[RMDB]
RNA sequence: GGGAACGACUCGAGUAGAGUCGAAAAGCCUUACGAUUCGUCGUAAGGCAUACAUAGUUUUGGCACUAUGAGCCCGCAGCGUUGGUGCUCCCACGCGGUGCAAUACGACGGAUUUCGAUCCGUCGAACAGUCUAUUUAUCUUCGGAUAAAUAGACUGAAAAGAAACAACAACAACAAC
Reactivity to 2A3 in 0.01 (KOAc 150mM, MgCl2 10mM, bicine 150mM(pH8.5), 24C), signal-to-noise 9, nucleotides 027 to 126: g000c000c000u000u000a000c000g010a010u020u080c220g050u000c000g000u140a000a000g000g000c000a000u020a000c000a010u000a010g050u040u050u170u270g270g000c110a000c010u010a010u030g010a010g030c000c010c030g010c030a030g010c010g060u150u180g030g030u170g080c050u100c020c000c000a020c020g000c020g020g050u110g020c060a040a080u150a140c020g000a000c000g000g010a000u060u050u080c080g080a020u000c000c000g000u000c000g000a010a010
Reactivity to DMS in 0.01 (KOAc 150mM, MgCl2 10mM, bicine 150mM(pH8.5), 24C), signal-to-noise 9, nucleotides 027 to 126: g010c000c000u000u000a000c010g000a020u000u010c190g020u000c000g010u000a000a010g010g010c000a000u000a030c020a010u000a010g000u000u000u010u010g020g010c220a050c010u000a010u000g000a120g000c000c000c000g020c050a190g000c030g010u010u000g010g010u010g010c230u010c070c000c010a050c060g010c020g010g020u000g010c110a110a070u010a150c020g010a010c000g000g000a010u000u000u010c150g000a030u000c000c000g010u000c000g000a040a130
Source: RMDB library M2PK50, as collected in RNAgym.
Chemical mapping of a 177-nucleotide RNA with 2A3 and DMS.
DMS adducts were read by reverse transcription with MarathonRT.